The data come from the RNA Mapping Database (RMDB), libraries RFM100 and RFMREP. This 177-nucleotide RNA was probed chemically with 2A3 and DMS. The RNA was probed in 150 mM KOAc, 10 mM MgCl2 and 150 mM bicine (pH 8.5) at 24 C. 2A3 is a SHAPE reagent: it acylates the 2'-hydroxyl of flexible nucleotides of all four kinds. For DMS the reverse transcriptase was MarathonRT.

RNA sequence: GGGAACGACUCGAGUAGAGUCGAAAAAUCCAUCACUUUUUCAAUGAGCAUUUCGUUGCUUUUGGACUGUAGUAACAUAGCUAUUCCCCUUUCGGCGAGACUUGGCGUGUUUCUGUCGUUCUUAGUAUGAAAUACAACACUUCGGUGUUGUAUUUCAAAAAGAAACAACAACAACAAC
Reactivity to 2A3 in 0.01 (KOAc 150mM, MgCl2 10mM, bicine 150mM(pH8.5), 24C), signal-to-noise 5, nucleotides 027 to 126: a000u030c030c010a050u080c030a060c060u130u100u050u130u100c070a080a080u160g010a040g020c030a050u050u100u140c110g130u130u070g010c040u030u020u010u050g020g010a020c010u030g000u060a030g020u020a070a010c010a080u040a060g000c000u030a060u070u080c010c000c000c020u020u070u090c030g020g000c030g010a030g010a040c000u030u040g050g020c000g020u040g000u000u010u010c010u010g030u010c010g000u020u000c010u020u030a080g040u040a080
Reactivity to DMS in 0.01 (KOAc 150mM, MgCl2 10mM, bicine 150mM(pH8.5), 24C), signal-to-noise 4, nucleotides 027 to 126: a070u010c030c030a130u040c110a100c040u020u000u000u020u000c050a060a050u020g010a030g030c060a040u020u010u020c140g020u000u010g010c010u000u000u010u010g010g010a030c100u010g010u000a050g020u010a060a080c100a070u000a100g010c070u000a110u000u000c010c010c000c060u000u010u010c050g020g000c020g000a100g020a030c040u010u000g010g000c120g010u000g000u000u000u000c020u000g020u000c010g000u000u010c000u000u000a090g020u020a100

Values cover nucleotides 27 to 126.